[RMDB]
RNA sequence: GGGAACGACUCGAGUAGAGUCGAAAAAACGGCGGGGGUAACUAUAACCCUCUUAAGGUAGCGAAAUGCCUUGUCGGACAAGUACCGACCUGCAUGAAUGGUAGAACGAGGUCCCCACUGUCCCUAGGUUUUAAUGAGCCUUCGGGCUCAUUAAAACAAAAGAAACAACAACAACAAC
Reactivity to 2A3 in 0.01 (KOAc 150mM, MgCl2 10mM, bicine 150mM(pH8.5), 24C), signal-to-noise 3, nucleotides 027 to 126: a000a000c010g000g010c000g010g010g010g000g010u040a040a010c020u010a010u110a220a050c010c010c010u010c000u010u040a020a000g030g010u000a000g070c090g150a120a030a150u060g000c010c010u000u030g010u010c030g000g020a020c060a240a030g010u070a160c000c000g000a000c000c000u040g000c000a080u090g150a250a050u290g110g020u040a020g000a020a040c060g000a020g000g000u050c010c000c000c000a000c010u010g040u040c000c000c010u040a070g000
Reactivity to DMS in 0.01 (KOAc 150mM, MgCl2 10mM, bicine 150mM(pH8.5), 24C), signal-to-noise 2, nucleotides 027 to 126: a090a030c100g030g010c000g000g000g000g020g000u040a050a130c090u010a100u020a090a090c210c000c020u010c030u000u010a050a040g000g020u000a060g010c120g010a130a120a090u000g000c000c000u010u000g000u020c000g000g000a070c080a140a040g020u060a050c000c000g010a030c010c010u000g000c010a020u030g000a110a020u050g000g020u000a020g020a050a090c120g000a050g000g010u010c010c020c000c050a050c010u000g040u000c040c020c010u010a030g020